Structure probing data (DMS and 2A3) for a 207-nucleotide construct. Conditions: 150 mM KOAc, 10 mM MgCl2 and 150 mM bicine (pH 8.5), 24 C. For 2A3 the reverse transcriptase was SuperScript II with manganese. Reactivities are given for positions 27 through 156.

RNA sequence: GGGAACGACUCGAGUAGAGUCGAAAAUAAUGGUUGAGAGCAUCACGCCAAAACCUAUGGCGGUAAGGGCCUGCAGCCCCAUGUAGCGCAAUACCGCUCGAUAUAACCCAAGCUUUGCAAAACCCACUAAGCUCAAAGGGACAACCAUAGAAAGUAGGAUAGAGACAUUUUUCGAAAUGUCUCUAUCAAAAGAAACAACAACAACAAC
Reactivity to DMS in 0.01 (KOAc 150mM, MgCl2 10mM, bicine 150mM(pH8.5), 24C), signal-to-noise 1, nucleotides 027 to 156: u000a070a130u050g000g030u000u000g030a210g010a240g040c020a190u000c140a110c040g000c040c020a050a070a050a170c070c020u000a010u010g000g040c010g050g080u000a060a140g020g000g090c000c000u010g010c050a200g010c030c030c090c000a220u010g020u010a040g000c030g000c000a200a150u010a100c090c030g020c010u010c080g000a130u000a080u000a130a190c030c010c000a200a110g010c060u000u000u000g020c040a050a090a090a140c060c050c040a190c000u000a030a050g000c010u000c000a050a090a130g060g000g000a100c050a030a060c000c040a040u000a090g010a080a080a140g030u000a070g010
Reactivity to 2A3 in 0.01 (KOAc 150mM, MgCl2 10mM, bicine 150mM(pH8.5), 24C), signal-to-noise 3, nucleotides 027 to 156: u150a020a090u060g010g000u010u050g030a050g000a020g050c020a060u070c060a050c080g020c010c010a040a070a030a050c070c060u120a200u110g000g020c010g040g000u030a020a020g080g040g010c000c000u010g000c010a040g020c080c030c020c000a040u050g010u040a010g010c030g000c130a030a050u030a070c010c010g000c000u010c000g030a020u060a010u030a300a060c010c010c000a000a020g000c000u010u090u160g010c080a060a060a190a270c020c030c000a020c030u040a010a020g000c000u020c070a120a080a060g000g000g010a020c010a000a020c000c010a010u060a040g140a040a120a010g140u170a030g130